Structure probing data (2A3 and DMS) for a 177-nucleotide construct. Values cover nucleotides 27 to 126. In probing experiments dimethyl sulfate is read out at A N1 and C N3, which are open when not base-paired. 2A3 adducts were read by reverse transcription with SuperScript II with manganese. The 2A3 profile rests on 3,459 reads.
RNA sequence: GGGAACGACUCGAGUAGAGUCGAAAAUGAUUACUGUUUCGGACACCAACGUCUUCCAUGAGCAACUAACGGCUCCAGCGAGAUCAUCGACACCUUUGAAGACGCCGGCUGCUCAAUCGCCAACUCACACUAUUACGGGUUUCGACCCGUAAUAGUGAAAAGAAACAACAACAACAAC
Reactivity to 2A3 in 0.01 (KOAc 150mM, MgCl2 10mM, bicine 150mM(pH8.5), 24C), signal-to-noise 3, nucleotides 027 to 126: u100g020a040u070u080a110c040u080g060u100u080u070c030g020g020a030c020a020c090c050a140a080c030g040u010c000u050u000c030c000a080u120g010a020g010c020a030a140c060u220a110a050c090g030g000c010u000c040c000a020g010c020g090a050g020a120u140c010a050u020c030g060a040c040a110c060c000u100u080u170g070a070a020g030a010c030g020c030c000g020g020c000u010g000c020u020c020a050a060u050c010g030c040c010a030a070c040u040c030a040
Reactivity to DMS in 0.01 (KOAc 150mM, MgCl2 10mM, bicine 150mM(pH8.5), 24C), signal-to-noise 3, nucleotides 027 to 126: u000g020a160u000u000a110c130u000g020u000u000u000c030g020g000a080c060a160c050c070a060a130c080g010u000c030u010u000c050c080a080u010g000a080g020c040a040a080c110u000a100a120c170g010g010c010u000c010c130a040g010c060g010a070g000a070u000c070a030u010c060g010a110c140a090c090c030u000u000u000g000a080a060g010a050c060g000c080c080g010g000c060u000g010c050u000c040a030a040u020c080g000c050c060a050a090c050u000c060a210